[RMDB]
RNA sequence: GGGAACGACUCGAGUAGAGUCGAAAAGAAGAGCCGGGCUAACAAAGGUGGGAGGCACCCAAGCCUUCGCAAGAGCCGAGUGGGAAGGCUAAGCGAAACCAAGACAAAAUGGUUAUAAAUAAUGCAAAUAUGGUCUGUAAUUCGUUACAGACCAUAUAAAAGAAACAACAACAACAAC
Reactivity to 2A3 in 0.01 (KOAc 150mM, MgCl2 10mM, bicine 150mM(pH8.5), 24C), signal-to-noise 2, nucleotides 027 to 126: g040a050a020g030a020g000c040c010g000g030g000c020u100a090a020c040a180a080a040g050g000u050g030g030g000a030g020g000c020a040c030c020c010a010a010g000c000c000u020u020c050g000c040a050a010g000a000g160c030c010g030a030g070u130g000g020g040a040a030g020g000c000u020a060a000g010c010g040a070a000a000c010c000a000a030g150a130c110a030a190a000a120u060g010g000u070u060a060u060a120a100a020u190a070a050u110g060c010a070a090
Reactivity to DMS in 0.01 (KOAc 150mM, MgCl2 10mM, bicine 150mM(pH8.5), 24C), signal-to-noise 4, nucleotides 027 to 126: g010a100a090g000a090g040c040c050g000g000g020c060u000a080a140c090a030a080a110g010g000u000g010g020g010a050g010g020c030a090c030c030c030a120a130g010c020c030u010u000c010g010c050a070a100g000a090g010c030c030g000a130g020u010g020g010g010a080a090g010g010c020u010a060a170g010c090g010a070a030a040c020c010a040a070g010a130c190a030a030a120a070u000g000g000u000u000a150u000a050a080a090u020a060a080u000g000c090a060a090